[RMDB]
Record summary: Chemical mapping of a 177-nucleotide RNA with DMS. DMS adducts were read by reverse transcription with MarathonRT. Conditions: 150 mM KOAc, 10 mM MgCl2 and 150 mM bicine (pH 8.5), 24 C. In probing experiments dimethyl sulfate is read out at A N1 and C N3, which are open when not base-paired. The DMS profile rests on 1,506 reads.
RNA sequence: GGGAACGACUCGAGUAGAGUCGAAAAGAUAUGGAAGUAUUCCUGUCUAAACAUUACGGUAGCACGCUUUCGGAAACGAAAGGCGUGCUAUAAUCGUAAUGUUUAGACAGGAGAUACUUCCUAAGUCCUCUCCAAUAGGGUUCGCCCUAUUGGAGAGAAAAGAAACAACAACAACAAC
Reactivity to DMS in 0.01 (KOAc 150mM, MgCl2 10mM, bicine 150mM(pH8.5), 24C), signal-to-noise 1, nucleotides 027 to 126: g000a070u000a300u000g000g010a030a030g020u010a000u000u000c000c000u000g000u000c000u010a010a010a000c000a010u000u000a000c010g040g030u000a010g030c000a030c020g010c000u000u020u000c010g000g000a140a140a300c000g020a020a000a020g040g010c000g010u000g000c000u000a000u000a190a090u010c020g010u000a010a010u000g000u000u000u000a000g010a020c020a010g000g020a000g000a000u000a000c000u000u000c000c010u010a030a140g000u000c080